[RMDB]
Background:
An RNA of 177 nucleotides, treated with 2A3 and DMS and read out base by base. The 2A3 profile rests on 2,452 reads. For DMS the reverse transcriptase was MarathonRT. Conditions: 150 mM KOAc, 10 mM MgCl2 and 150 mM bicine (pH 8.5), 24 C. In probing experiments dimethyl sulfate is read out at A N1 and C N3, which are open when not base-paired. For 2A3 the reverse transcriptase was SuperScript II with manganese. It was measured as part of the RMDB library OK2TRN.
RNA sequence: GGGAACGACUCGAGUAGAGUCGAAAACUCAUCACCAGUGGAUGACCACUGAAGAUAUGCUCAAAGUGUGGAACAGAGUGUGGAUAGAAGACAACCCUAAUAUGACUGACAAGACUCCAGUCCAUUCGUUGCCUGUAAGAUUCGUCUUACAGGCAACAAAAGAAACAACAACAACAAC
Reactivity to 2A3 in 0.01 (KOAc 150mM, MgCl2 10mM, bicine 150mM(pH8.5), 24C), signal-to-noise 3, nucleotides 027 to 126: c010u010c020a030u030c010a000c050c000a020g010u020g000g070a190u250g230a220c030c000a010c020u020g010a040a010g030a010u110a040u120g120c050u040c090a080a040a060g040u050g000u040g050g060a060a040c030a070g070a030g040u090g010u040g080g000a060u030a120g070a050a000g050a050c040a030a070c080c000c000u020a060a040u210a140u210g030a050c020u000g010a020c040a090a090g020a060c020u010c030c020a000g040u000c050c000a060u110u170c070
Reactivity to DMS in 0.01 (KOAc 150mM, MgCl2 10mM, bicine 150mM(pH8.5), 24C), signal-to-noise 3, nucleotides 027 to 126: c030u000c020a100u000c030a140c160c000a020g020u000g000g040a270u000g010a190c030c020a000c000u000g000a090a080g000a090u000a100u010g000c040u000c050a090a060a080g020u000g030u010g020g000a100a060c070a040g000a090g020u000g020u010g000g020a080u000a030g020a070a040g010a090c070a080a120c050c020c040u000a080a080u000a090u000g000a070c040u000g020a090c090a040a080g000a100c060u000c110c020a070g010u000c030c150a100u020u000c140